Conditions: 150 mM KOAc, 10 mM MgCl2 and 150 mM bicine (pH 8.5), 24 C. An RNA of 177 nucleotides, treated with 2A3 and DMS and read out base by base. The 2A3 profile rests on 1,394 reads. For DMS, 1,852 sequencing reads were counted.
RNA sequence: GGGAACGACUCGAGUAGAGUCGAAAAGGGGUCGCGGUGGUCCCGGGGCCGCCGAUGGUUUGUCGGACCCCCGCCGGCGUGCCCCCAGAACCAAUCGCAACCCGGGGGGACCCCGCCCCGGGGCGGGGAUACCCCAGAAGUUCGCUUCUGGGGUAUCAAAAGAAACAACAACAACAAC
Reactivity to 2A3 in 0.01 (KOAc 150mM, MgCl2 10mM, bicine 150mM(pH8.5), 24C), signal-to-noise 1, nucleotides 027 to 126: g000g000g010g050u050c040g000c010g020g220u020g000g020u030c060c060c070g010g000g000g000c030c040g010c010c010g010a010u030g080g220u120u240u250g110u100c040g030g080a120c000c010c010c000c020g020c020c000g010g030c010g020u150g000c000c040c000c000c020a010g010a020a000c000c010a050a110u050c010g000c020a010a040c000c000c020g010g000g000g000g010g000a050c000c000c000c050g040c000c020c000c020g040g070g000g000c040g000g000g020
Reactivity to DMS in 0.01 (KOAc 150mM, MgCl2 10mM, bicine 150mM(pH8.5), 24C), signal-to-noise 1, nucleotides 027 to 126: g030g020g010g020u000c020g010c010g010g000u000g000g010u020c010c230c300g000g010g000g000c020c060g010c000c000g040a030u020g000g020u050u030u030g000u020c030g000g000a160c000c000c000c000c070g000c070c000g000g000c010g000u010g000c030c010c000c000c030a050g000a190a040c000c010a100a050u010c010g000c010a090a020c010c000c010g000g010g000g020g030g000a150c080c030c010c000g010c010c000c140c080g020g100g040g000c060g020g030g030